[RMDB]
Notes:
This 207-nucleotide RNA was probed chemically with 2A3 and DMS. The DMS profile rests on 3,801 reads. For 2A3, 4,633 sequencing reads were counted.
RNA sequence: GGGAACGACUCGAGUAGAGUCGAAAACUUCUCAGAAUUCCAGCAAGAGGCGUGGAGAGAGGGCCGCGGUGCUCUGGAGUAGAGGCUCUGCCUUCGAAACACCAUCGAUCGUCCCUUCUUCUUUACCUUCUUCUGGCUCUUCUUGGAGACGCGACCGCUAAAAGAGCAUGUUCGCAUGCUCUUUUAGAAAAGAAACAACAACAACAAC
Reactivity to 2A3 in 0.01 (KOAc 150mM, MgCl2 10mM, bicine 150mM(pH8.5), 24C), signal-to-noise 3, nucleotides 027 to 156: c010u040u030c030u000c010a010g030a020a020u200u050c000c010a010g010c160a020a010g010a000g020g020c160g050u000g010g000a000g000a000g000a000g000g000g000c020c010g030c010g010g000u000g000c000u020c000u030g000g010a000g000u010a010g000a000g010g010c010u090c230u300g050c030c000u120u210c000g010a000a000a000c000a020c130c020a000u010c000g080a300u030c010g020u000c000c000c000u050u040c020u050u010c000u000u000u010a000c000c000u000u010c000u000u010c010u010g000g000c000u010c010u010u000c000u030u090g100g010a020g010a030c030g010c050g090a060c000c020g000
Reactivity to DMS in 0.01 (KOAc 150mM, MgCl2 10mM, bicine 150mM(pH8.5), 24C), signal-to-noise 2, nucleotides 027 to 156: c010u010u000c010u000c030a240g000a070a150u020u000c030c010a080g000c190a070a070g000a090g000g000c090g050u000g020g010a120g010a130g000a010g020g030g020c020c040g030c060g060g010u000g000c050u000c010u000g000g020a190g000u000a110g010a080g020g020c030u000c110u010g000c040c020u000u010c020g000a300a190a240c020a000c090c010a080u000c010g000a120u000c000g000u000c000c000c000u010u000c040u000u010c000u000u000u000a050c050c010u000u000c000u010u000c020u000g020g020c050u000c060u000u000c020u010u030g030g020a100g010a090c080g000c060g000a240c020c040g020